[RMDB]
RNA sequence: GGGAACGACUCGAGUAGAGUCGAAAAAUCAGAGAAACAGAAAAAUAUGGGUUUCAAACACUUAAAGAACGCUUACCAAUCUGGAUAAAACAGUCAAAGCGAGCAAUUCGAAACGACUAAAGGAACAUGGUAUCAGUCCUUUCGAGGACUGAUACCAAAAAGAAACAACAACAACAAC
Reactivity to 2A3 in 0.01 (KOAc 150mM, MgCl2 10mM, bicine 150mM(pH8.5), 24C), signal-to-noise 1, nucleotides 027 to 126: a000u090c020a000g020a180g000a000a070a000c000a000g140a170a030a030a030a010u300a160u160g090g090g000u060u130u230c000a000a000a060c140a000c010u150u300a010a010a010g050a130a000c110g000c150u000u000a000c020c000a040a000u020c000u060g000g000a000u090a070a000a060a080c000a000g000u000c040a050a050a050g090c000g000a020g000c020a080a300u160u000c040g030a000a000a130c020g000a140c000u040a000a040a040g100g000a140a090c050a000
Structure probing data (2A3) for a 177-nucleotide construct. For 2A3, 329 sequencing reads were counted. The RNA was probed in 150 mM KOAc, 10 mM MgCl2 and 150 mM bicine (pH 8.5) at 24 C. For 2A3 the reverse transcriptase was SuperScript II with manganese. The data come from the RNA Mapping Database (RMDB), library OK1LIB.